[RMDB]
RNA sequence: GGGAACGACUCGAGUAGAGUCGAAAACUGAUUUGUUCAUCUUCCUCAUCAGAAAUAGAGGCUUAUGGAUUUUGGAUUAUUCUUAUCUAAGAUCCUUUCACAGGAGUAGAAUAAGAUCUAAUUCUAUUAGCUCAAAAGCUUUUGCUGGCUCAUAGAGGCCAUUACGUUUAUUCGUAAACGUAAUGGCAAAAGAAACAACAACAACAAC
Reactivity to 2A3 in 0.01 (KOAc 150mM, MgCl2 10mM, bicine 150mM(pH8.5), 24C), signal-to-noise 2, nucleotides 027 to 156: c020u040g000a040u060u080u110g020u110u050c040a100u040c090u110u020c000c020u000c020a060u030c030a020g160a070a170a020u150a060g070a030g080g010c030u090u080a020u060g020g010a050u030u030u110u060g010g010a020u030u030a050u210u190c060u050u120a040u060c000u000a030a050g020a140u000c010c000u000u090u110c120a110c020a000g050g010a020g010u030a020g040a080a060u040a040a010g010a010u030c010u050a100a030u030u040c000u000a000u050u030a040g000c000u010c200a020a100a050a080g010c000u010u130u080u300g010c030u020g020g000c000u000c070a040u020a040g020a010g130
Reactivity to DMS in 0.01 (KOAc 150mM, MgCl2 10mM, bicine 150mM(pH8.5), 24C), signal-to-noise 1, nucleotides 027 to 156: c080u000g000a100u000u000u010g000u010u020c020a160u000c030u020u000c010c020u000c030a100u040c040a160g000a120a130a150u000a220g010a100g000g000c030u000u010a060u030g010g000a080u010u010u000u020g000g000a080u010u000a080u000u010c160u000u000a070u010c030u000a040a140g040a070u000c010c010u000u000u000c120a180c140a070g000g020a080g010u000a030g010a090a050u000a030a050g010a060u000c040u000a070a070u000u000c000u010a060u000u000a030g030c030u000c030a080a070a080a150g000c040u010u000u000u000g000c000u000g000g040c060u000c060a040u000a070g000a220g020